[RMDB]
RNA sequence: GGGAACGACUCGAGUAGAGUCGAAAAGGCGACACGGUCGGCGGCAAGAUCGUCGCCGAGCCGACGAUCGAGCAGCAGCGUGACUACGACACUGGUGCGCCGCUGGUCUACGACGACGGCAACCCGCGUAUGCAGAUGGUCAUUACGGUGCAGACCGUCCUCACACUACGUUCGCGUAGUGUGAGGAAAAAGAAACAACAACAACAAC
Reactivity to 2A3 in 0.01 (KOAc 150mM, MgCl2 10mM, bicine 150mM(pH8.5), 24C), signal-to-noise 1, nucleotides 027 to 156: g050g010c000g020a120c020a030c150g000g140u020c000g010g010c000g010g010c000a000a070g060a300u100c070g000u030c000g000c060c000g000a000g000c000c000g000a060c000g020a220u000c000g000a000g000c000a000g030c000a000g000c000g010u040g220a010c030u070a010c090g200a050c040a020c120u100g000g000u000g000c000g000c000c000g000c000u060g010g180u140c070u060a210c000g040a000c010g060a000c000g010g000c040a090a090c000c000c030g010c060g040u010a090u120g110c080a020g050a120u060g070g000u000c060a000u040u080a040c010g040g050u080g030c030a050g030a030c000c000g030